Description: An RNA of 177 nucleotides, treated with 2A3 and DMS and read out base by base. For DMS the reverse transcriptase was MarathonRT. As a SHAPE reagent, 2A3 marks flexible, mostly unpaired nucleotides at the ribose 2'-OH. Source: RMDB libraries RFM100 and RFMREP, as collected in RNAgym.
RNA sequence: GGGAACGACUCGAGUAGAGUCGAAAAGGUGAGAAGUGAUCAAGCUUGGGCUGACAAGAGGCUCAGGGAGCCCUCACGUUCUUUCGCUUUUUUACCUGCCAAUCAAACUGCUACAAGACAACACCCUAUGACAGUCCAAAUUCGUUUGGACUGUCAUAAAAGAAACAACAACAACAAC
Reactivity to 2A3 in 0.01 (KOAc 150mM, MgCl2 10mM, bicine 150mM(pH8.5), 24C), signal-to-noise 7, nucleotides 027 to 126: g020g010u030g010a040g000a030a020g010u020g020a040u130c060a060a020g040c020u040u030g010g020g010c020u050g040a080c050a130a110g050a060g130g000c020u010c020a020g040g080g050a010g020c000c000c010u010c000a020c030g150u070u000c000u020u070u020c040g090c060u010u060u020u010u040u080a060c000c010u030g040c020c020a030a060u060c060a060a050a060c030u060g030c000u060a040c020a080a020g030a020c000a050a010c020a030c000c020c000u000
Reactivity to DMS in 0.01 (KOAc 150mM, MgCl2 10mM, bicine 150mM(pH8.5), 24C), signal-to-noise 3, nucleotides 027 to 126: g000g000u000g030a050g000a000a080g010u000g020a040u010c180a260a120g010c030u000u000g020g010g000c010u000g020a220c220a150a100g000a070g000g040c000u000c020a070g000g010g000a030g000c120c070c080u000c040a110c130g010u020u000c000u040u010u020c000g000c000u000u000u000u030u020u020a050c010c000u000g000c010c010a120a100u000c120a040a060a070c070u010g010c030u000a050c090a090a070g000a070c070a060a080c090a100c010c070c010u010